An RNA of 207 nucleotides, treated with 2A3 and read out base by base.
It was measured as part of the RMDB library OK3TST.

RNA sequence: GGGAACGACUCGAGUAGAGUCGAAAAAUGGUUCAGACAUGGCUAAGAAGUUUGGCCGUCGAACCCGCUCAAUUAUUAAGCAAUCAAAAUACCGUGCCCUUUUUUCAACAUCAUUGAGUGGAGAUCAAGCCGCCGCCGACGAGUGGGCCUUGGACAAGGUCUAAGUCCAUUUCGAUGGACUUAGACCAAAAGAAACAACAACAACAAC
Reactivity to 2A3 in 0.01 (KOAc 150mM, MgCl2 10mM, bicine 150mM(pH8.5), 24C), signal-to-noise 2, nucleotides 027 to 156: a000u060g040g010u050u030c000a040g030a010c060a150u190g010g000c050u060a070a010g120a120a110g150u090u040u100g010g000c000c010g000u010c010g000a010a010c020c010c020g010c000u020c030a000a150u060u030a010u090u190a110a040g050c010a030a130u050c040a100a110a170a140u190a040c080c070g060u080g030c000c010c000u080u040u010u010u110u250c090a070a040c040a050u090c000a030u020u020g050a030g010u050g020g060a130g010a030u130c050a020a000g030c020c000g060c060c010g020c030c010g190a170c040g040a110g090u100g000g010g060c020c000u030u010g030g010a010c030a130a050